RNA sequence: GGGAACGACUCGAGUAGAGUCGAAAACUACAUAGUUUCGACUAUGUAGAAACCAUUAGGAAGCAUGCAGAUGCAUUUGGACGAGGGCAACUAACCUAUUGCGAACAGCAGGUUUCGACCUGCUGAAACCCCCUUACUUAUUCGUAAGUAAGGGGGUAAAAGAAACAACAACAACAAC
Reactivity to 2A3 in 0.01 (KOAc 150mM, MgCl2 10mM, bicine 150mM(pH8.5), 24C), signal-to-noise 5, nucleotides 027 to 126: c000u000a000c000a000u010a000g010u010u040u100c180g040a010c010u000a000u010g000u010a000g010a030a010a010c010c000a040u040u110a060g070g060a080a020g040c060a030u090g030c060a010g040a230u090g020c060a080u060u040u200g040g020a040c060g020a090g000g050g020c020a060a020c030u080a040a050c010c020u060a120u070u200g070c070g060a090a030c020a000g000c000a000g000g030u020u020u050c080g070a030c000c000u000g000c000u000g000a000a000
Reactivity to DMS in 0.01 (KOAc 150mM, MgCl2 10mM, bicine 150mM(pH8.5), 24C), signal-to-noise 7, nucleotides 027 to 126: c010u000a000c000a010u000a000g010u000u000u000c170g020a030c000u010a000u000g000u000a010g000a060a100a160c030c010a100u010u010a100g010g000a120a100g020c050a030u000g000c100a070g010a070u000g010c040a090u000u010u010g010g000a090c080g010a090g000g000g000c040a040a050c090u000a080a090c060c030u000a100u010u000g010c080g010a090a200c010a000g000c000a000g010g010u000u000u010c170g000a020c000c000u000g000c000u000g010a020a090